[RMDB]
Chemical mapping of a 177-nucleotide RNA with 2A3 and DMS. Source: RMDB library 15KREP, as collected in RNAgym.
RNA sequence: GGGAACGACUCGAGUAGAGUCGAAAAGUAUCACUUGUAUGUCUUCAAUCAGGUCUUAUCAAGUGAUGUUAUGUUUGAAGAUGCCCAAGGUUUGAAAAAGUUCUACAAAGAAGUUAGAGCUUACCUACUAUUUGUAAAUGUUCGCAUUUACAAAUAGAAAAGAAACAACAACAACAAC
Reactivity to 2A3 in 0.01 (KOAc 150mM, MgCl2 10mM, bicine 150mM(pH8.5), 24C), signal-to-noise 5, nucleotides 027 to 126: g020u010a010u040c000a000c010u020u020g040u030a030u090g010u000c010u080u100c100a110a270u090c030a030g050g100u020c020u080u140a090u160c020a030a040g020u020g030a020u000g000u000u070a100u060g080u000u120u100g110a100a050g010a060u090g020c010c010c030a020a010g070g010u020u160u260g080a040a040a000a000a000g000u000u000c000u000a010c020a050a290a070g180a130a020g140u090u040a000g010a000g010c000u000u010a000c000c000u010a050
Reactivity to DMS in 0.01 (KOAc 150mM, MgCl2 10mM, bicine 150mM(pH8.5), 24C), signal-to-noise 5, nucleotides 027 to 126: g000u000a020u000c000a020c010u000u000g010u000a050u010g010u000c000u010u000c120a120a110u030c300a040g000g010u000c030u000u000a130u010c020a030a030g010u000g010a010u000g000u000u000a060u010g000u000u000u010g000a080a100g010a120u010g000c100c020c010a110a030g010g010u000u000u000g010a040a020a030a060a010g030u000u000c000u000a020c030a080a110a160g000a110a120g010u010u000a010g000a030g000c000u000u000a020c010c010u000a220
Annotation: DMS adducts were read by reverse transcription with MarathonRT. The RNA was probed in 150 mM KOAc, 10 mM MgCl2 and 150 mM bicine (pH 8.5) at 24 C. 2A3 adducts were read by reverse transcription with SuperScript II with manganese. For 2A3, 4,918 sequencing reads were counted.